[RMDB]
RNA sequence: GGGAACGACUCGAGUAGAGUCGAAAAUUCAUAGUGUAAGGAGAGCGGGAACUGGAAAACGCCUCGCUUUUUUCCUGUAAAACACCGCAACGCAGGAAAAGCGCAUGCUUAUCGGGACAACAACCCAGUAGGUCUUAUACUUCGGUAUAAGACCUACAAAAGAAACAACAACAACAAC
Reactivity to DMS in 0.01 (KOAc 150mM, MgCl2 10mM, bicine 150mM(pH8.5), 24C), signal-to-noise 4, nucleotides 027 to 126: u010u020c040a090u010a100g010u000g020u010a090a080g000g010a060g030a060g020c040g000g010g020a100a250c200u000g000g020a110a080a140a060c200g000c270c060u030c020g010c030u000u000u010u010u020u000c000c000u000g000u000a080a090a100a030c110a080c050c060g010c060a050a090c080g000c050a010g000g010a040a030a060a010g000c020g000c150a050u020g030c020u000u020a110u010c060g000g010g010a080c080a060a020c170a060a090c020c020c020a180
Reactivity to 2A3 in 0.01 (KOAc 150mM, MgCl2 10mM, bicine 150mM(pH8.5), 24C), signal-to-noise 4, nucleotides 027 to 126: u060u020c020a040u070a110g090u050g040u060a040a030g060g010a060g010a030g030c100g030g010g010a100a100c050u090g070g070a050a080a050a030c060g000c010c000u010c020g020c000u050u010u000u010u030u010c010c000u010g000u020a010a020a040a010c090a040c030c040g030c050a070a070c100g010c040a000g020g000a040a000a030a000g000c010g010c050a040u090g010c020u060u070a090u180c040g000g000g060a010c020a100a010c010a010a060c120c000c010a010
Structure probing data (DMS and 2A3) for a 177-nucleotide construct.
2A3 adducts were read by reverse transcription with SuperScript II with manganese.
DMS (dimethyl sulfate) methylates the pairing face of unpaired adenines and cytosines.
Values cover nucleotides 27 to 126.